[RMDB]
An RNA of 177 nucleotides, treated with 2A3 and DMS and read out base by base. Values cover nucleotides 27 to 126. For DMS, 1,641 sequencing reads were counted. For DMS the reverse transcriptase was MarathonRT. For 2A3 the reverse transcriptase was SuperScript II with manganese. It was measured as part of the RMDB library OK2TST.
RNA sequence: GGGAACGACUCGAGUAGAGUCGAAAACGGUGGUCAACGUGCUCCGACUCUUCUUGGCGAUGGCCUGCUCGCCCGCAUGCACCCUGAACGGCCGCCUCCUCAUUGAGAUCCUGUCCAGGUGCGGCGACGCACGGGGUACUUUCGAGUACCCCGUGCGAAAAGAAACAACAACAACAAC
Reactivity to 2A3 in 0.01 (KOAc 150mM, MgCl2 10mM, bicine 150mM(pH8.5), 24C), signal-to-noise 1, nucleotides 027 to 126: c040g010g050u130g060g130u080c090a000a070c020g020u030g040c030u040c010c010g050a070c030u010c020u130u020c010u000u050g060g030c090g110a140u140g100g000c000c000u020g020c000u040c020g030c000c000c000g020c000a050u150g050c000a040c030c070c020u000g040a080a000c040g040g000c020c000g000c000c040u050c000c000u110c060a080u080u160g070a050g000a050u020c010c030u050g050u020c040c000a000g020g000u030g010c040g000g020c010g000a020
Reactivity to DMS in 0.01 (KOAc 150mM, MgCl2 10mM, bicine 150mM(pH8.5), 24C), signal-to-noise 1, nucleotides 027 to 126: c100g030g020u010g000g000u010c070a120a110c060g000u010g010c110u000c000c010g010a050c050u000c050u000u000c040u000u000g000g010c050g000a080u000g000g000c020c000u000g000c090u000c030g000c030c010c050g000c070a100u000g000c050a120c050c040c030u000g020a070a120c060g000g020c100c060g020c100c010u000c020c040u000c110a130u010u020g000a080g000a120u000c050c010u000g020u010c030c000a080g000g000u000g020c020g030g000c040g010a140